[RMDB]
RNA sequence: GGGAACGACUCGAGUAGAGUCGAAAACGGUCGACGCACGGUCAUGCACCCCCGAUCCGUCGCCCCCUCCACCCCGCGGAUUCCGGUCUCGACCGGUAGCCGUAUUGGGCGGGGACGGGCGGCGGUCAACGCAACAUCCAUUCGUGGAUGUUGCGUUAAAAGAAACAACAACAACAAC
Reactivity to 2A3 in 0.01 (KOAc 150mM, MgCl2 10mM, bicine 150mM(pH8.5), 24C), signal-to-noise 3, nucleotides 027 to 126: c030g010g040u050c020g030a030c050g030c110a040c030g030g030u030c020a040u120g020c050a060c010c020c000c000c020g020a050u050c010c000g000u000c000g000c000c000c010c000c000u030c010c010a050c000c010c010c010g000c000g010g010a040u090u050c000c000g000g010u010c020u050c180g180a060c010c000g000g000u010a020g040c000c000g020u020a130u080u180g000g000g000c000g000g020g000g010a020c030g000g000g010c000g000g010c000g000g000u000c000
Reactivity to DMS in 0.01 (KOAc 150mM, MgCl2 10mM, bicine 150mM(pH8.5), 24C), signal-to-noise 2, nucleotides 027 to 126: c090g000g030u000c010g020a120c130g010c050a080c060g000g010u010c020a060u020g040c090a140c040c000c000c000c040g000a050u060c000c000g000u000c000g000c000c000c000c000c000u000c000c000a000c000c000c000c300g000c000g000g020a040u050u000c000c000g000g000u000c020u010c300g020a070c000c000g000g000u000a000g040c000c000g000u040a040u060u080g010g000g010c180g000g020g000g010a010c300g000g000g020c000g030g000c000g010g000u020c000

Source: RMDB library RFM100, as collected in RNAgym. The record gives the reactivity of an RNA of 177 nucleotides to 2A3 and DMS. 2A3 adducts were read by reverse transcription with SuperScript II with manganese. Reactivities are given for positions 27 through 126. DMS adducts were read by reverse transcription with MarathonRT. The DMS profile rests on 2,346 reads. For 2A3, 3,570 sequencing reads were counted.